[RMDB]
RNA sequence: GGGAACGACUCGAGUAGAGUCGAAAAGUUUAGUGCAUCAUUCAGAGCACGACUCGAGAAGUGUGAAACUCCUGAUCAAAAGUGUGUACAAACCCAAACUGAUGGAGCAAGUGUUAAUGGAAGAACCCUGGUCAGGUGAAUUCGUUCACCUGACCAGAAAAGAAACAACAACAACAAC
Reactivity to DMS in 0.01 (KOAc 150mM, MgCl2 10mM, bicine 150mM(pH8.5), 24C), signal-to-noise 1, nucleotides 027 to 126: g000u020u000u010a080g010u000g000c070a020u020c020a150u040u010c020a190g000a050g070c110a140c070g000a000c000u000c020g040a020g040a020a190g030u000g000u020g030a050a050a120c070u000c190c000u000g100a000u000c040a160a120a190a080g100u010g000u000g020u000a080c080a010a000a000c050c000c070a090a100a000c060u000g000a110u070g020g000a070g020c070a000a030g000u000g010u020u020a110a150u020g000g010a070a010g000a190a100c100c140
Reactivity to 2A3 in 0.01 (KOAc 150mM, MgCl2 10mM, bicine 150mM(pH8.5), 24C), signal-to-noise 2, nucleotides 027 to 126: g100u050u150u270a000g000u000g000c000a110u020c000a010u300u000c020a110g070a000g030c000a000c090g050a030c000u000c030g120a130g000a300a000g060u040g000u020g060a000a120a000c020u070c130c050u000g030a030u130c130a000a160a000a000g300u190g020u000g020u150a000c020a000a230a000c050c000c060a030a010a010c080u050g000a020u110g040g050a000g000c080a110a000g110u080g000u190u070a160a130u080g100g000a030a030g010a050a080c000c000